[RMDB]
RNA sequence: GGGAACGACUCGAGUAGAGUCGAAAAUAACCACCGGCGUUUUGGCGAACUCGACAAUUUUCGUUACGAGCGAGCAUCUUGCCAAAAUGAGAAAACUUUUGCCAACACCAAACGUGUCGAGGUCCAAAUGCCGAUAGGUAUUCGUACCUAUCGGCAUAAAAGAAACAACAACAACAAC
Reactivity to DMS in 0.01 (KOAc 150mM, MgCl2 10mM, bicine 150mM(pH8.5), 24C), signal-to-noise 3, nucleotides 027 to 126: u050a130a170c040c000a130c200c070g040g010c100g020u000u000u020u000g020g030c080g030a060a160c000u000c010g020a050c060a120a170u010u000u000u000c220g030u020u040a140c220g000a060g010c000g000a060g020c170a110u010c060u000u040g000c050c000a060a000a040a000u000g030a140g000a180a000a170a230c060u030u020u060u000g020c110c050a040a120c160a120c200c070a070a020a090c120g010u020g000u030c010g000a060g000g000u000c040c080a100a120
Reactivity to 2A3 in 0.01 (KOAc 150mM, MgCl2 10mM, bicine 150mM(pH8.5), 24C), signal-to-noise 4, nucleotides 027 to 126: u070a010a050c020c010a030c000c040g080g000c030g010u010u000u010u040g010g000c030g020a110a070c000u000c010g050a060c070a130a090u080u060u130u100c120g060u090u180a160c170g030a080g080c000g010a000g010c020a070u050c000u080u050g040c020c040a020a010a000a030u140g010a040g140a040a070a010a040c030u090u050u070u100g020c010c020a060a040c040a020c030c020a170a040a040c060g020u030g000u050c040g050a040g020g040u050c050c010a060a150